Description: Structure probing data (2A3) for a 207-nucleotide construct. The 2A3 profile rests on 729 reads.
RNA sequence: GGGAACGACUCGAGUAGAGUCGAAAAGGGGUGGCGACGCCUCAGCGACGAUCGGAUGUGGAGCCAGCAGCGAAAGGAAGGAGACGAGCUCCUGUUUCUCCGCUGGACGCCAGGAUCCGCGGCGACCGAGGCAGAGCUCCACCCGACCUCGACUUCCGCAUCUAAGAGUGUUCGCACUCUUAGAUGCAAAAGAAACAACAACAACAAC
Reactivity to 2A3 in 0.01 (KOAc 150mM, MgCl2 10mM, bicine 150mM(pH8.5), 24C), signal-to-noise 1, nucleotides 027 to 156: g090g000g010g000u010g020g030c010g000a050c070g000c000c020u010c020a010g000c000g080a100c010g030a150u300c020g050g010a000u000g000u040g150g030a010g050c010c000a000g000c040a010g000c030g020a020a050a000g110g170a100a050g000g010a080g020a060c200g050a040g130c020u000c010c000u000g120u000u030u000c010u000c010c000g000c000u000g000g040a040c050g040c040c010a010g100g080a000u000c000c000g000c000g000g000c000g080a230c100c040g000a000g000g030c000a010g040a070g040c010u000c010c000a000c030c020c000g040a070c000c050u210c040g080a100c040u150u030c070c070